The data come from the RNA Mapping Database (RMDB), library OK2TST. Structure probing data (DMS and 2A3) for a 177-nucleotide construct.
RNA sequence: GGGAACGACUCGAGUAGAGUCGAAAAACCUGGCGUGUUCGCCGGAGCCGGCUUCGGCCCAGUUCAGCUUGCAGCGCUGGAAUGUCUGCGGGUCCUGCGGGUCCGGAAUGUCGUCCGCGGCCCAGCCCGCAGUAAUGCCUUUCGAGGCAUUACUGCGAAAAGAAACAACAACAACAAC
Reactivity to DMS in 0.01 (KOAc 150mM, MgCl2 10mM, bicine 150mM(pH8.5), 24C), signal-to-noise 4, nucleotides 027 to 126: a080c050c000u010g030g010c040g030u010g010u000u000c070g030c040c040g010g000a100g010c110c120g000g010c100u010u000c070g020g010c030c010c040a080g010u000u010c050a100g010c030u000u000g030c080a050g000c160g000c030u000g010g000a110a080u010g010u000c030u000g010c030g000g000g010u000c080c100u010g020c150g010g000g010u010c020c010g010g000a040a060u010g020u000c140g010u010c000c010g000c110g010g000c020c010c020a110g010c030c050
Reactivity to 2A3 in 0.01 (KOAc 150mM, MgCl2 10mM, bicine 150mM(pH8.5), 24C), signal-to-noise 3, nucleotides 027 to 126: a000c000c000u000g020g010c040g000u080g080u010u270c050g000c080c030g030g020a020g060c070c030g060g060c050u120u090c060g040g000c020c010c010a030g010u110u100c020a000g010c010u060u140g060c050a070g050c010g000c090u110g020g140a130a060u140g030u060c040u050g010c060g030g000g020u070c040c050u110g030c050g000g020g000u010c000c030g000g090a100a060u170g050u090c030g040u020c020c000g000c040g000g010c000c010c010a000g030c000c020
For 2A3 the reverse transcriptase was SuperScript II with manganese.
The RNA was probed in 150 mM KOAc, 10 mM MgCl2 and 150 mM bicine (pH 8.5) at 24 C.
The 2A3 profile rests on 2,856 reads.